The data come from the RNA Mapping Database (RMDB), library ARCHII. This 207-nucleotide RNA was probed chemically with 2A3 and DMS. 2A3 is a SHAPE reagent: it acylates the 2'-hydroxyl of flexible nucleotides of all four kinds. 2A3 adducts were read by reverse transcription with SuperScript II with manganese. Reactivities are given for positions 27 through 156. Conditions: 150 mM KOAc, 10 mM MgCl2 and 150 mM bicine (pH 8.5), 24 C.

[RMDB]
RNA sequence: GGGAACGACUCGAGUAGAGUCGAAAAUUGCCAUCAAUAUGGGUGCCAUGGAGGAGUCCGUGGCAUUCAGGUUGGCUAAGGAGGGAUGAACCGGGCCAGGGGUGAAAACCAGCAGCCAAGAGUUCCCGUGGUAGGCAGUAGUGGGAUAGCGUACCGGCUUAGGUUAUUUGUUCGCAAAUAACCUAAGAAAAGAAACAACAACAACAAC
Reactivity to 2A3 in 0.01 (KOAc 150mM, MgCl2 10mM, bicine 150mM(pH8.5), 24C), signal-to-noise 1, nucleotides 027 to 156: u080u040g000c000c000a020u020c040a050a160u120a090u180g010g000g000u000g000c000c000a000u000g050g000a070g120g030a090g240u020c000c000g000u000g000g000c000a000u000u000c000a000g000g010u010u010g010g000c050u050a060a040g040g010a040g020g010g000a010u060g050a060a040c040c020g010g010g030c000c040a040g020g020g010g020u040g060a000a030a020a040c010c000a000g030c040a010g030c010c000a060a010g030a010g040u020u020c020c010c020g000u020g030g010u040a040g040g000c050a020g020u120a040g050u080g000g010g020a040u070a050g040c020g020u020a050c030c030g020g020
Reactivity to DMS in 0.01 (KOAc 150mM, MgCl2 10mM, bicine 150mM(pH8.5), 24C), signal-to-noise 1, nucleotides 027 to 156: u030u010g020c020c020a170u000c010a160a090u000a070u010g030g010g050u000g000c010c000a060u030g020g030a050g010g030a270g000u000c020c000g150u010g000g060c000a010u000u010c030a000g010g000u010u010g000g000c050u010a050a100g000g040a110g030g030g000a100u000g010a140a120c040c020g020g020g040c010c020a180g000g020g000g020u000g000a130a060a110a050c070c020a080g020c080a090g020c020c030a020a070g000a180g020u000u000c000c010c000g080u000g030g000u000a010g030g030c010a130g010u000a090g000u000g020g010g000a120u000a070g000c030g020u020a120c080c030g000g000